[RMDB]
RNA sequence: GGGAACGACUCGAGUAGAGUCGAAAAUGCUGCACGCGGUGCAGAAACUGAGCAGGGAUAACAGCACCUCCUGGCUGAGCGACAGGAACGUCGUCAUGUCCCGUGACCAUCCCUCCGGUAACAGGGCCGCGACUAGAACGUUCGCGUUCUAGUCGCGAAAAGAAACAACAACAACAAC
Reactivity to DMS in 0.01 (KOAc 150mM, MgCl2 10mM, bicine 150mM(pH8.5), 24C), signal-to-noise 1, nucleotides 027 to 126: u000g030c010u000g010c020a090c010g070c160g040g100u000g000c010a030g010a030a150a140c080u010g030a230g070c050a020g000g010g000a080u000a140a140c100a120g000c060a140c050c040u000c010c000u000g000g010c040u020g010a090g000c040g000a060c040a080g000g020a040a050c250g020u000c080g000u010c040a080u000g010u000c010c010c020g000u010g010a020c000c240a110u010c080c030c000u030c040c030g000g000u000a070a160c120a080g020g000g030c150
Reactivity to 2A3 in 0.01 (KOAc 150mM, MgCl2 10mM, bicine 150mM(pH8.5), 24C), signal-to-noise 1, nucleotides 027 to 126: u090g000c000u020g000c020a020c030g300c130g160g130u010g020c010a000g000a110a030a000c070u060g020a040g090c030a010g020g020g020a050u050a140a170c100a060g010c020a030c000c030u060c010c000u010g070g000c070u110g020a000g010c000g020a010c000a000g070g000a110a070c020g070u100c020g030u000c020a000u050g050u010c030c000c000g010u010g000a040c010c010a050u070c070c070c000u040c010c020g060g000u060a070a040c000a070g060g030g030c000